[RMDB]
RNA sequence: GGGAACGACUCGAGUAGAGUCGAAAAGAAGAAAAGUCGUAUGUUGAAAAAGUACAUGACGAAAAGAAAAGAAAAAGACAUACGACUGAAAAGUCAUGUACAAAAAGCAUGGAAACAUGCGAAGAAAGGGUAUACUAUUGUUCGCAAUAGUAUACCCAAAAGAAACAACAACAACAAC
Reactivity to 2A3 in 0.01 (KOAc 150mM, MgCl2 10mM, bicine 150mM(pH8.5), 24C), signal-to-noise 3, nucleotides 027 to 126: g120a060a000g080a020a130a000a010g000u000c000g000u000a000u010g010u010u030g030a100a030a000a000a000g010u000a000c000a000u000g000a000c050g030a010a100a000a060g100a010a120a010a030g150a010a130a020a000a000g020a000c010a000u010a000c020g000a000c010u020g040a030a070a000a000g000u000c000a000u000g000u010a000c010a000a010a060a000a000g020c000a000u000g010g010a000a000a040c000a020u010g000c030g010a040a000g070a060a110a030
Reactivity to DMS in 0.01 (KOAc 150mM, MgCl2 10mM, bicine 150mM(pH8.5), 24C), signal-to-noise 3, nucleotides 027 to 126: g000a190a130g020a130a090a060a020g000u000c010g000u000a000u000g000u000u000g000a040a050a100a040a040g000u000a000c000a020u000g010a010c000g020a100a060a070a100g010a080a100a080a110g030a060a110a070a040a040g020a000c010a000u000a020c000g010a000c000u000g000a020a050a030a060g000u000c010a000u000g000u000a010c020a100a060a040a090a090g000c000a000u000g000g000a180a100a170c010a000u000g020c000g020a080a090g020a100a060a100
This 177-nucleotide RNA was probed chemically with 2A3 and DMS. The data come from the RNA Mapping Database (RMDB), library OK1LIB. DMS adducts were read by reverse transcription with MarathonRT. 2A3 is a SHAPE reagent: it acylates the 2'-hydroxyl of flexible nucleotides of all four kinds.